[RMDB]
RNA sequence: GGGAACGACUCGAGUAGAGUCGAAAACUAAAAACUGGAGCUGUAGGUGUUGCUCUUUCAGCGUCGCCCGCUGUUUUUCUCGCUGGCUUUCAGCGGGCCAGAAAGUUCAGACCUCUCAGCAGAUCGUCGCGUCGUUCUCAACCACAAAAAAUGCCAGCAUUAUCUCGUUGUUCGCAACGAGAUAAUGAAAAGAAACAACAACAACAAC
Reactivity to DMS in 0.01 (KOAc 150mM, MgCl2 10mM, bicine 150mM(pH8.5), 24C), signal-to-noise 1, nucleotides 027 to 156: c050u020a140a040a030a130a020c040u010g020g000a190g030c030u000g010u000a060g030g010u000g040u000u000g000c080u000c050u000u000u000c050a240g000c090g020u010c140g000c000c000c000g040c000u000g000u000u000u000u010u000c040u000c050g000c010u000g020g000c000u000u000u000c010a020g030c030g010g020g060c020c080a060g000a060a100a060g060u000u000c010a190g010a070c030c010u020c040u010c170a150g040c050a080g010a030u000c030g010u000c030g050c190g000u000c030g020u000u000c000u000c000a220a070c220c080a110c090a010a020a030a010a010a050u010g010c020c000a050g010
Reactivity to 2A3 in 0.01 (KOAc 150mM, MgCl2 10mM, bicine 150mM(pH8.5), 24C), signal-to-noise 3, nucleotides 027 to 156: c040u110a080a050a060a050a030c100u160g110g020a070g040c010u010g000u030a000g000g010u100g050u260u080g020c070u020c000u020u020u000c060a120g050c060g210u300c180g030c000c000c000g000c000u000g000u000u010u000u010u010c070u010c050g000c000u000g000g000c020u000u000u000c000a000g000c010g000g000g010c000c000a020g000a000a010a000g010u030u030c010a000g020a030c010c000u040c030u020c030a010g000c020a040g040a110u160c080g040u010c000g050c000g000u000c000g000u000u000c000u000c000a020a040c030c030a040c050a030a010a000a000a000a010u110g000c000c000a000g000
The data come from the RNA Mapping Database (RMDB), library ARCHII.
The record gives the reactivity of an RNA of 207 nucleotides to DMS and 2A3.